[RMDB]
About this RNA:
Structure probing data (DMS and 2A3) for a 177-nucleotide construct. DMS adducts were read by reverse transcription with MarathonRT. The reactions ran in a buffer of 150 mM KOAc, 10 mM MgCl2 and 150 mM bicine (pH 8.5), at 24 C. For DMS, 10,073 sequencing reads were counted.
RNA sequence: GGGAACGACUCGAGUAGAGUCGAAAACCGUAUCGGUUCGCCGAUACGGAAAAGUUAAUGCUGCUAACACACAUCUAAAGCAUGGCGGUGGUAUCGCUGGUGGGACUCCCCAGUUCGCUGGGGAGAACCAUCCUCCCAAGUUCGCUUGGGAGGAUGGAAAAGAAACAACAACAACAAC
Reactivity to DMS in 0.01 (KOAc 150mM, MgCl2 10mM, bicine 150mM(pH8.5), 24C), signal-to-noise 6, nucleotides 027 to 126: c010c000g000u000a000u000c000g000g000u000u010c230g030c010c000g010a010u000a010c000g000g000a010a030a050a090g020u000u010a050a050u010g010c040u000g020c070u000a070a090c090a060c090a060c080a050u000c060u000a060a090a070g020c060a030u000g000g010c050g010g020u000g020g010u000a050u000c060g010c040u010g010g020u000g010g000g010a240c010u000c000c000c000c000a000g000u000u000c150g010c000u000g000g000g000g000a000g000a020a070
Reactivity to 2A3 in 0.01 (KOAc 150mM, MgCl2 10mM, bicine 150mM(pH8.5), 24C), signal-to-noise 6, nucleotides 027 to 126: c010c000g000u000a000u000c000g000g040u040u040c150g050c060c000g010a000u000a010c000g000g010a040a090a000a010g040u050u100a080a030u120g040c030u020g030c030u100a150a000c050a000c000a000c010a130u050c040u130a140a040a040g030c040a040u060g040g000c030g010g040u080g040g080u080a040u120c020g000c040u030g030g010u060g010g020g040a050c000u010c000c000c000c000a010g010u020u050c160g000c090u000g010g000g000g000a000g000a000a000